[RMDB]
RNA sequence: GGGAACGACUCGAGUAGAGUCGAAAAAAAAGAUAUGGAUAUGUCUACCCACCAAUAGCCGUCGACGAUCUCUCUUCGGAAACGAAGAGAGGGAGACGCGCUAUUGAGGACAUAUCCUAAGUCAAAACGAUUUAUUUAGCUUCGGCUAAAUAAAUCGAAAAGAAACAACAACAACAAC
Reactivity to DMS in 0.01 (KOAc 150mM, MgCl2 10mM, bicine 150mM(pH8.5), 24C), signal-to-noise 1, nucleotides 027 to 126: a020a100a090a130g020a070u010a130u010g000g000a000u000a000u010g000u000c000u000a040c020c000c030a300c020c000a010a000u000a000g020c000c000g000u000c010g010a090c290g000a070u000c000u000c000u010c020u000u000c000g040g000a020a020a060c000g000a020a010g000a000g000a040g010g000g010a060g000a000c000g000c290g000c000u000a000u000u000g010a070g000g000a010c000a020u000a030u000c000c000u000a000a060g000u010c030a120a100a100a250